[RMDB]
RNA sequence: GGGAACGACUCGAGUAGAGUCGAAAAGCCGAGCGUCCGUCUUUGACAUCAUUGGACGCGUAGUACGAGCGAUUGCUUGAUGAUAGACGGAUGAUCCUCGUCUAGGUGAUCGCGUGAUAUACCUAUGAGUUCUGUAGGAAUUCGUUCCUACAGAACUAAAAGAAACAACAACAACAAC
Reactivity to 2A3 in 0.01 (KOAc 150mM, MgCl2 10mM, bicine 150mM(pH8.5), 24C), signal-to-noise 5, nucleotides 027 to 126: g040c020c020g040a020g000c010g000u000c040c010g030u020c090u120u110u220g100a080c040a090u190c030a070u130u250g010g010a010c000g000c010g000u010a010g020u020a020c080g020a040g050c010g010a030u000u050g000c000u060u110g030a090u100g020a040u150a090g030a010c040g020g060a050u150g070a060u140c020c020u080c010g020u000c010u020a020g000g000u010g010a010u000c000g000c020g050u020g030a030u040a000u040a190c030c020u100a140u240g070
Reactivity to DMS in 0.01 (KOAc 150mM, MgCl2 10mM, bicine 150mM(pH8.5), 24C), signal-to-noise 7, nucleotides 027 to 126: g020c060c030g010a150g010c010g020u000c000c000g000u000c030u000u010u010g010a140c160a110u000c110a080u010u020g020g010a010c000g010c000g020u000a050g010u010a070c120g010a180g010c010g010a030u000u000g010c010u000u000g010a090u010g010a150u000a030g010a030c020g010g010a120u000g000a140u000c120c060u000c030g010u000c010u000a030g010g020u000g000a010u000c010g010c070g020u000g010a080u000a110u000a090c050c060u000a090u010g010
Chemical mapping of a 177-nucleotide RNA with 2A3 and DMS.
Conditions: 150 mM KOAc, 10 mM MgCl2 and 150 mM bicine (pH 8.5), 24 C.